[RMDB]
RNA sequence: GGGAACGACUCGAGUAGAGUCGAAAAAGCAUCCGGUCUACGCGCUUACUUUCAGGAACGACAACCGCCUGACGUAACACUUUGUCCAUGCUGAAGGCUUCAGCAUCGCUGCGCAUAAACGGCAGCACAGCGUAUUCGUAUUCGUACGAAUACGCUGAAAAGAAACAACAACAACAAC
Reactivity to 2A3 in 0.01 (KOAc 150mM, MgCl2 10mM, bicine 150mM(pH8.5), 24C), signal-to-noise 4, nucleotides 027 to 126: a000g030c020a050u040c030c010g000g030u020c010u050a030c050g020c000g000c030u060u040a040c040u060u180u090c040a030g030g020a150a110c040g080a030c090a070a040c020c020g010c010c030u020g040a030c030g010u060a060a020c050a010c140u120u060u100g070u010c030c000a040u040g000c010u030g020a120a080g220g020c060u040u020c030a010g000c000a020u050c060g000c010u030g000c080g000c010a030u160a070a190a000c040g070g000c000a000g000c020a040
Reactivity to DMS in 0.01 (KOAc 150mM, MgCl2 10mM, bicine 150mM(pH8.5), 24C), signal-to-noise 4, nucleotides 027 to 126: a060g030c080a080u000c030c030g000g000u010c020u000a070c110g000c040g010c040u010u010a050c060u000u010u010c060a050g000g000a040a060c090g010a090c080a030a030c040c160g000c010c010u000g010a060c300g010u010a050a040c100a060c080u000u000u000g010u000c030c040a050u000g010c010u000g010a070a080g030g020c170u000u000c000a040g020c040a050u000c140g000c020u000g010c040g020c090a110u030a030a070a070c200g010g010c060a040g010c030a260
Background
The record gives the reactivity of an RNA of 177 nucleotides to 2A3 and DMS. Conditions: 150 mM KOAc, 10 mM MgCl2 and 150 mM bicine (pH 8.5), 24 C. For 2A3, 5,107 sequencing reads were counted. Values cover nucleotides 27 to 126.